Source information: An RNA of 177 nucleotides, treated with DMS and 2A3 and read out base by base. 2A3 adducts were read by reverse transcription with SuperScript II with manganese. DMS adducts were read by reverse transcription with MarathonRT. Source: RMDB library OK2TRN, as collected in RNAgym. Values are in units of 0.01, from 0 to 300, in steps of 10.
RNA sequence: GGGAACGACUCGAGUAGAGUCGAAAAGGUCUUACGUCAGCCAUGAGAACAACGCUAACUCUCAUGGUUGUCACAGAGAUGUGACGACGCUGACCAUCUAAGUUAGCGCUUGUUAGAUGGUAAGACACGCUAUCGUGGCAUUCGUGCCACGAUAGCGAAAAGAAACAACAACAACAAC
Reactivity to DMS in 0.01 (KOAc 150mM, MgCl2 10mM, bicine 150mM(pH8.5), 24C), signal-to-noise 2, nucleotides 027 to 126: g000g010u010c010u000u010a010c060g000u000c040a240g000c020c030a050u010g000a100g010a050a030c050a050a020c120g020c050u000a040a030c050u000c050u000c120a000u000g020g030u000u000g020u000c000a000c000a010g010a290g000a170u010g020u020g020a000c000g000a060c190g000c180u020g000a020c070c040a040u000c110u000a020a030g000u000u010a010g000c000g010c170u000u000g010u000u000a060g010a010u000g010g010u000a040a020g010a030c010a290
Reactivity to 2A3 in 0.01 (KOAc 150mM, MgCl2 10mM, bicine 150mM(pH8.5), 24C), signal-to-noise 2, nucleotides 027 to 126: g070g030u030c000u030u030a020c040g020u000c020a000g010c030c010a020u050g030a080g010a190a020c030a000a020c050g030c060u020a020a010c010u010c000u000c040a030u030g020g000u000u070g000u010c000a010c000a000g040a010g020a040u020g000u000g000a000c060g020a030c070g030c230u120g040a030c020c000a060u090c060u060a070a000g000u010u000a020g000c040g000c080u000u050g030u020u010a040g020a020u060g100g000u030a050a060g010a000c000a020